[RMDB]
RNA sequence: GGGAACGACUCGAGUAGAGUCGAAAACUGCUCGUCGGUGCCGAACAGCGCCAGGAUCUCGGCGUUGCCGGAGUCCGGCGCCUGACAGCCGAACGCCGACGGCGCCCACCGGGAGCGGCCGAUGAUCCCCUCACCUGUAUUUCGAUACAGGUGAGGGAAAAGAAACAACAACAACAAC
Reactivity to 2A3 in 0.01 (KOAc 150mM, MgCl2 10mM, bicine 150mM(pH8.5), 24C), signal-to-noise 4, nucleotides 027 to 126: c040u050g030c030u030c040g140u030c030g040g010u050g030c020c000g060a140a060c070a070g010c000g000c010c020a070g100g010a060u020c040u020c060g030g010c060g090u040u090g110c000c000g030g010a050g080u050c040c030g010g000c000g000c000c010u010g010a020c040a010g000c020c050g060a100a060c040g000c010c000g010a020c010g000g000c000g030c000c000c000a030c000c040g000g000g030a030g020c020g040g140c030c010g040a100u170g010a020u060c000
Reactivity to DMS in 0.01 (KOAc 150mM, MgCl2 10mM, bicine 150mM(pH8.5), 24C), signal-to-noise 2, nucleotides 027 to 126: c040u000g000c120u000c020g060u000c000g000g030u030g000c100c050g020a110a220c180a010g000c000g010c000c000a170g000g010a020u050c100u000c000g010g000c010g020u000u000g000c010c040g050g000a050g090u000c200c180g000g030c010g010c040c010u040g000a170c300a100g000c080c210g010a160a300c020g030c000c000g000a300c180g000g060c000g000c000c010c010a250c050c040g000g000g040a130g000c060g030g020c070c000g000a030u010g020a050u000c030
Background
Structure probing data (2A3 and DMS) for a 177-nucleotide construct. Reactivities are rounded to 0.1 and cut off at 0 and 3. The data come from the RNA Mapping Database (RMDB), library OK1LIB. For 2A3, 2,942 sequencing reads were counted. For 2A3 the reverse transcriptase was SuperScript II with manganese.